[RMDB]
RNA sequence: GGGAACGACUCGAGUAGAGUCGAAAAAGCUUUGCGAAAACGUUAGAUAUGUACCCUAUUAAGAAUCUCGAGGAUUUAUACGAUAAAGAAGGAUACCGUGAUGGCGAAUUUAAAAAGGGUGAUAAGGCUUCCGAACAAUAUUCGUAUUGUUCGGAAGAAAAGAAACAACAACAACAAC
Reactivity to 2A3 in 0.01 (KOAc 150mM, MgCl2 10mM, bicine 150mM(pH8.5), 24C), signal-to-noise 4, nucleotides 027 to 126: a000g100c060u080u170u100g040c060g080a050a020a010a070c050g060u120u060a020g030a140u110a040u170g070u060a060c020c000c000u070a120u070u130a130a070g080a090a090u010c000u010c060g050a080g100g000a070u000u110u020a190u110a090c090g040a100u110a150a210a030g120a100a080g130g010a030u040a120c020c020g030u080g080a020u070g030g010c060g030a060a100u030u040u190a130a120a030a030a000g050g000g000u130g060a110u060a130a000g080g070
Reactivity to DMS in 0.01 (KOAc 150mM, MgCl2 10mM, bicine 150mM(pH8.5), 24C), signal-to-noise 3, nucleotides 027 to 126: a090g010c030u000u000u000g010c110g030a040a040a050a190c050g010u010u010a040g000a130u000a020u040g010u020a020c030c020c000u020a150u020u010a060a160g010a020a010u020c050u010c090g010a100g000g010a080u000u000u000a080u000a110c130g020a100u020a050a070a090g020a120a080g000g020a080u000a030c040c000g020u010g000a100u010g000g000c020g000a030a150u010u050u010a030a100a010a140a030g000g020g020u010g000a100u010a070a080g000g020

Chemical mapping of a 177-nucleotide RNA with 2A3 and DMS. For DMS the reverse transcriptase was MarathonRT. 2A3 adducts were read by reverse transcription with SuperScript II with manganese.